[RMDB]
RNA sequence: GGGAACGACUCGAGUAGAGUCGAAAAUCUCAAAGCUUCGGCUUUGAGACAGUAAGGGAAACCGAUUAUUCCGCUCGACUCCGGAGAAACAAAGUCAAAUAAGAACGUUAGGCUUCGGCCUAACGAACCAAAACCAAUUGUUCGCAAUUGGUUUUGGAAAAGAAACAACAACAACAAC
Reactivity to DMS in 0.01 (KOAc 150mM, MgCl2 10mM, bicine 150mM(pH8.5), 24C), signal-to-noise 2, nucleotides 027 to 126: u000c000u000c000a000a000a010g030c010u000u000c220g060g000c000u000u000u000g000a000g010a010c140a080g000u010a070a120g000g000g000a070a080a160c120c060g000a120u010u010a140u000u010c010c040g000c110u000c020g000a110c020u010c040c030g000g040a040g010a100a050a060c170a030a090a070g010u000c170a050a060a120u000a080a120g020a080a200c010g000u020u000a000g010g010c000u010u040c180g040g000c000c000u000a000a000c000g000a020a100
Reactivity to 2A3 in 0.01 (KOAc 150mM, MgCl2 10mM, bicine 150mM(pH8.5), 24C), signal-to-noise 2, nucleotides 027 to 126: u010c000u000c000a000a030a000g030c030u090u140c220g110g020c000u010u010u010g010a000g010a010c000a020g120u120a060a150g040g000g040a060a060a070c060c010g010a020u000u130a130u150u020c000c010g000c010u010c040g030a030c010u000c040c040g080g000a070g060a080a110a010c070a030a150a000g080u140c040a000a000a130u230a180a070g110a170a020c020g000u000u000a000g000g010c000u010u070c200g100g000c000c000u000a010a000c000g000a000a010
Source: RMDB library M2PK50, as collected in RNAgym.
The record gives the reactivity of an RNA of 177 nucleotides to DMS and 2A3.
High DMS reactivity at an A or C suggests that its Watson-Crick edge is free.
The reactions ran in a buffer of 150 mM KOAc, 10 mM MgCl2 and 150 mM bicine (pH 8.5), at 24 C.
The 2A3 profile rests on 1,860 reads.
Reactivities are given for positions 27 through 126.